This 177-nucleotide RNA was probed chemically with DMS.
RNA sequence: GGGAACGACUCGAGUAGAGUCGAAAAGUUCUGCACAAAAUUAUCUCGCGCAGAAUAUAAAUGAAACGAUUGAAGGAAAAACUUUUUUACAGACCGCGGGGCUGUUGGUGAAAUUUUGGCACAGGAACUGUGCGGACAAUUUCGAUUGUCCGCACAGAAAAGAAACAACAACAACAAC
Reactivity to DMS in 0.01 (KOAc 150mM, MgCl2 10mM, bicine 150mM(pH8.5), 24C), signal-to-noise 1, nucleotides 027 to 126: g010u020u010c000u020g000c000a030c080a100a220a090a060u000u080a040u010c100u000c060g000c120g000c000a000g000a060a060u000a120u050a110a220a120u050g000a170a140a110c210g010a050u040u000g030a060a130g000g000a070a080a030a150a040c020u030u030u020u090u000u030a050c030a130g010a110c020c010g000c090g060g030g000g030c000u000g000u000u000g000g000u000g030a070a000a160u060u030u060u000g000g050c070a030c130a050g000g000a040a060
For DMS the reverse transcriptase was MarathonRT. It was measured as part of the RMDB library OK1LIB.